Background
The data come from the RNA Mapping Database (RMDB), library OK3TST. Structure probing data (2A3) for a 207-nucleotide construct. The RNA was probed in 150 mM KOAc, 10 mM MgCl2 and 150 mM bicine (pH 8.5) at 24 C.

RNA sequence: GGGAACGACUCGAGUAGAGUCGAAAAGGAAAUUAACACCAGGCAUACUUCAGAGCAGGACAGGUCAAGGGAUAACCAAAUAGGUCUCCUGUUACUAGAAUUAUUUACAAUGUCAGAGUAGUUCUUGAUGUUUACUUGGCCCUCUCUUGGCAAAGGCGUUGUCCACACUAUUCGUAGUGUGGACAACAAAAGAAACAACAACAACAAC
Reactivity to 2A3 in 0.01 (KOAc 150mM, MgCl2 10mM, bicine 150mM(pH8.5), 24C), signal-to-noise 1, nucleotides 027 to 156: g030g000a050a030a110u030u090a080a000c000a000c040c010a030g080g080c020a100u040a060c030u160u020c000a000g000a020g000c040a010g070g000a040c080a190g000g110u020c000a120a060g080g000g090a080u120a090a020c000c020a030a030a030u140a040g000g010u010c020u040c010c010u050g020u100u090a080c010u040a010g070a030a030u070u030a070u020u100u040a120c060a060a110u060g030u080c050a020g020a030g090u090a000g030u000u060c040u060u150g100a180u040g000u020u240u010a100c030u060u080g000g010c030c000c000u000c000u000c010u060u110g060g000c000a020a050a110g060g010c130